RNA sequence: GGGAACGACUCGAGUAGAGUCGAAAAGCACGUAGGUUCAGAUGAUGGGCCCGCAUCGGUACGAAAGUACGACGAAAGUCUAGCCUACGUGCAUGAGCACGCGGGCCCCGUGCUCUACUGCAAAAGACGUGGGUCAGUAGUUCGCUACUGACCCACGAAAAGAAACAACAACAACAAC
Reactivity to 2A3 in 0.01 (KOAc 150mM, MgCl2 10mM, bicine 150mM(pH8.5), 24C), signal-to-noise 1, nucleotides 027 to 126: g000c000a010c000g000u000a000g000g020u140u100c220a000g000a040u000g000a020u060g020g030g000c020c000c000g000c000a000u020c000g080g050u000a020c020g020a040a000a110g000u000a020c000g020a000c000g010a190a120a010g020u000c020u000a000g000c000c010u000a000c000g030u000g000c010a000u020g000a000g000c000a010c020g000c010g000g000g010c020c000c000c000g000u000g000c020u000c000u000a060c030u130g130c010a000a140a050a080g020a010